[RMDB]
RNA sequence: GGGAACGACUCGAGUAGAGUCGAAAAUAGAACUGCCAAGUACACUAUAGGUAGAGUCAGUUAGGAGACUCUGUGCCUAAGAGAAGCCUAUUCUCCUGUACUUGGCAGUAUAGGGCCAGGAAUAGGCUAUCCUAACUGAGGUGUACUGUCAUGAUGGCUGACCCUAAAAUUUCGAUUUUAGGGUCAGAAAAGAAACAACAACAACAAC
Reactivity to DMS in 0.01 (KOAc 150mM, MgCl2 10mM, bicine 150mM(pH8.5), 24C), signal-to-noise 2, nucleotides 027 to 156: u000a160g010a070a180c070u020g030c010c010a040a050g010u000a000c010a120c120u000a190u000a060g020g030u020a090g010a160g000u000c010a080g000u000u000a030g000g010a130g020a150c060u000c030u000g000u000g020c110c070u000a140a060g000a070g010a300a160g000c080c030u000a050u000u000c000u000c020c040u020g050u000a000c010u010u010g000g000c130a000g000u010a000u010a060g000g020g000c000c120a160g000g020a050a060u000a020g000g020c020u000a070u010c020c000u000a040a050c020u000g020a080g000g030u000g030u010a060c030u000g000u000c040a060u030g000a130u010g010g030
Reactivity to 2A3 in 0.01 (KOAc 150mM, MgCl2 10mM, bicine 150mM(pH8.5), 24C), signal-to-noise 3, nucleotides 027 to 156: u160a010g070a070a030c030u010g030c010c010a030a020g000u010a000c020a020c030u150a090u150a300g040g040u070a060g030a030g120u010c010a000g000u010u000a030g000g010a030g020a020c000u010c010u000g050u110g040c000c020u080a050a000g020a000g000a030a010g000c000c010u020a020u010u000c060u050c010c040u040g000u000a000c010u010u050g030g000c000a000g000u000a000u000a000g000g000g020c070c090a020g020g010a010a020u020a010g000g020c010u020a040u010c000c000u000a000a000c000u030g040a020g010g060u060g000u030a030c030u030g050u070c040a070u130g130a060u120g130g000